[RMDB]
RNA sequence: GGGAACGACUCGAGUAGAGUCGAAAACUUCAGCGCAACCCCGGACGAGACGGGCAGCUACUCGUUCGAUCCGAUUUCGGGCCGCUACGACGACGAGUGGACACCGCGCUUCGCAACGAUCGACAUAACGACAGUCGGAGAGACGGGAGACAGCGCGGAAGCGCAACUAAUUCGUUAGUUGCGCUUCAAAAGAAACAACAACAACAAC
Reactivity to DMS in 0.01 (KOAc 150mM, MgCl2 10mM, bicine 150mM(pH8.5), 24C), signal-to-noise 1, nucleotides 027 to 156: c040u010u010c070a130g010c000g000c030a140a070c090c000c070c020g010g000a160c020g010a060g030a110c030g030g000g000c010a110g000c060u010a130c040u000c000g000u010u000c030g000a110u000c010c000g010a250u000u010u010c050g000g020g030c000c020g010c080u000a090c120g030a150c050g020a020c020g030a120g000u000g010g010a250c000a030c020c000g060c030g050c050u000u010c060g010c000a020a020c030g000a090u010c000g050a170c060a140u010a090a130c080g000a120c080a080g000u000c030g000g020a250g010a170g000a120c040g050g000g010a110g000a100c140a120g010c010g020c010g020
Reactivity to 2A3 in 0.01 (KOAc 150mM, MgCl2 10mM, bicine 150mM(pH8.5), 24C), signal-to-noise 3, nucleotides 027 to 156: c020u110u070c060a060g000c000g010c010a010a060c000c000c020c010g000g090a060c060g100a030g050a040c060g000g040g010c000a050g070c010u040a030c010u020c000g090u120u050c000g070a110u010c030c030g140a200u040u130u300c010g020g020g010c010c050g080c060u110a070c060g090a020c070g000a000c030g010a050g020u000g070g010a050c050a060c120c000g030c000g000c000u050u050c020g000c050a080a110c050g070a150u080c010g000a030c050a140u180a250a080c100g030a030c080a100g050u120c010g050g000a010g000a000g020a010c000g000g030g000a030g000a020c090a020g000c000g000c000g010